[RMDB]
RNA sequence: GGGAACGACUCGAGUAGAGUCGAAAAUCCAGCUUGGUCUGGAAGCCUGCCCCAUCUCUGGGCCUCCCUUUACUCAGGACGUGCUGACUCACUGAGUCAUCAUCCCAUGCCUAAGACAACCAGAGGGCGUUGAUCACAAGUUCGCUUGUGAUCAACGAAAAGAAACAACAACAACAAC
Reactivity to 2A3 in 0.01 (KOAc 150mM, MgCl2 10mM, bicine 150mM(pH8.5), 24C), signal-to-noise 1, nucleotides 027 to 126: u000c010c010a010g050c080u190u300g140g000u170c010u020g000g020a040a040g050c000c000u040g000c010c000c010c010a110u070c060u000c010u070g050g000g000c030c000u050c000c000c000u030u040u040a080c040u050c030a010g010g040a060c100g060u100g070c040u030g030a020c000u000c010a110c100u120g010a000g000u030c000a010u010c000a030u010c000c010c010a020u130g010c000c000u030a000a060g050a070c040a060a070c030c060a050g040a090g090g000g030
Reactivity to DMS in 0.01 (KOAc 150mM, MgCl2 10mM, bicine 150mM(pH8.5), 24C), signal-to-noise 2, nucleotides 027 to 126: u010c000c000a050g000c030u000u010g050g010u010c010u000g010g010a040a110g020c030c050u010g020c040c000c000c080a110u020c060u000c050u000g010g020g010c050c050u000c020c000c010u010u000u020a050c100u000c050a090g020g010a110c160g000u000g020c090u010g000a040c000u000c010a140c110u010g010a010g000u000c020a020u000c160a190u000c030c000c010a100u010g000c050c030u000a070a070g010a080c120a090a090c040c030a040g000a090g010g030g020